Source: RMDB library RFM100, as collected in RNAgym.
An RNA of 177 nucleotides, treated with 2A3 and read out base by base.
Reactivities are given for positions 27 through 126.
For 2A3 the reverse transcriptase was SuperScript II with manganese.
Reactivities are rounded to 0.1 and cut off at 0 and 3.
RNA sequence: GGGAACGACUCGAGUAGAGUCGAAAAGCUGAGACUCAGCUGCUGACUCGUUGGUUCAAUAGCUCACAACAUGCAUAGUGUCAACGUGUGUGCUUCUGAUCCAACGAUGCGGGAGCUGCAUUCCAGUCAGGCCUGCCCCAUUCGUGGGGCAGGCCUGAAAAGAAACAACAACAACAAC
Reactivity to 2A3 in 0.01 (KOAc 150mM, MgCl2 10mM, bicine 150mM(pH8.5), 24C), signal-to-noise 2, nucleotides 027 to 126: g050c000u000g060a040g010a070c000u020c000a000g000c000u080g160c000u000g000a120c050u000c010g000u040u000g000g000u010u000c000a000a020u030a050g000c000u000c000a010c010a080a030c020a050u110g090c070a120u110a290g160u140g080u300c040a050a040c160g010u020g000u000g000u020g020c000u040u020c020u040g000a000u000c000c000a040a040c010g000a030u070g010c000g040g020g020a000g000c020u000g000c000a000u130u040c010c020a000g030u020